RNA sequence: GGGAACGACUCGAGUAGAGUCGAAAAAGGCGCUGUAGAACUUAAUUGUUCUGAUAGAGCAGCGAGUCGUGCAUGCUAGUCUAACAUUUCUUGCUACCUAGUAUCUUUAGAAGAUUUCCCUCCCUUAUCCAUAAGCCUGAUUCGUCAGGCUUAUGGAAAAAGAAACAACAACAACAAC
Reactivity to 2A3 in 0.01 (KOAc 150mM, MgCl2 10mM, bicine 150mM(pH8.5), 24C), signal-to-noise 4, nucleotides 027 to 126: a000g090g010c030g010c020u050g030u110a010g020a000a000c030u040u090a170a050u300u110g020u000u000c000u020g070a090u080a070g120a020g000c010a010g030c030g000a010g050u060c030g010u060g050c030a050u030g000c000u030a000g050u040c070u030a030a030c070a120u090u110u150c070u050u110g010c020u010a060c000c000u010a030g040u060a030u060c020u060u130u030a120g010a180a010g010a060u000u020u050c000c000c010u050c000c030c000u070u100a040
Reactivity to DMS in 0.01 (KOAc 150mM, MgCl2 10mM, bicine 150mM(pH8.5), 24C), signal-to-noise 4, nucleotides 027 to 126: a100g000g010c010g010c010u010g000u000a010g000a030a000c000u000u000a090a120u030u000g020u010u000c000u000g010a110u000a100g020a100g000c000a090g020c020g000a050g000u010c030g000u020g010c150a050u010g020c020u000a020g000u010c100u010a080a080c080a050u040u030u010c110u010u010g020c060u000a040c220c000u000a040g010u000a010u000c050u020u010u010a140g010a080a090g000a100u010u000u000c010c000c010u000c010c010c010u000u030a120
Notes
An RNA of 177 nucleotides, treated with 2A3 and DMS and read out base by base. The RNA was probed in 150 mM KOAc, 10 mM MgCl2 and 150 mM bicine (pH 8.5) at 24 C. For 2A3, 1,924 sequencing reads were counted. For DMS the reverse transcriptase was MarathonRT.